Background
This 177-nucleotide RNA was probed chemically with 2A3 and DMS. Values cover nucleotides 27 to 126. For 2A3, 7,448 sequencing reads were counted. High DMS reactivity at an A or C suggests that its Watson-Crick edge is free. For DMS the reverse transcriptase was MarathonRT. The DMS profile rests on 5,668 reads.
[RMDB]
RNA sequence: GGGAACGACUCGAGUAGAGUCGAAAAGGAUCACGAGGGGGAGACCCCGGCUACCUGGGACGGACACCCAAGGUGCUCACACCGGAGACGGUGGAUCCGGCCCGAGAGGGCAACGAAGGUCCGAACAGAUGAUAUGGAUGUUCGCAUCCAUAUCAUCAAAAGAAACAACAACAACAAC
Reactivity to 2A3 in 0.01 (KOAc 150mM, MgCl2 10mM, bicine 150mM(pH8.5), 24C), signal-to-noise 2, nucleotides 027 to 126: g010g000a010u010c010a010c120g100a170g000g000g010g000g000a060g020a040c000c000c000c000g020g000c000u060a060c010c010u010g000g010g010a040c020g030g000a010c030a300c040c010c000a030a060g030g000u020g000c030u050c050a140c000a000c010c000g000g010a050g020a040c030g000g020u010g020g000a020u000c000c000g020g000c000c000c010g000a020g010a010g000g010g000c020a040a010c060g080a070a030g050g000u000c010c000g000a070a030c070a060
Reactivity to DMS in 0.01 (KOAc 150mM, MgCl2 10mM, bicine 150mM(pH8.5), 24C), signal-to-noise 6, nucleotides 027 to 126: g000g010a020u000c030a240c150g000a160g030g000g010g000g010a240g000a230c010c000c000c010g010g020c050u010a070c020c000u000g010g000g010a090c020g020g000a040c030a100c020c010c020a060a050g020g010u000g010c090u000c140a300c020a040c020c010g000g010a210g000a220c040g010g000u000g010g010a080u000c010c020g010g000c010c000c010g000a120g010a210g000g000g010c010a100a060c180g000a080a080g040g000u000c010c010g010a210a110c240a110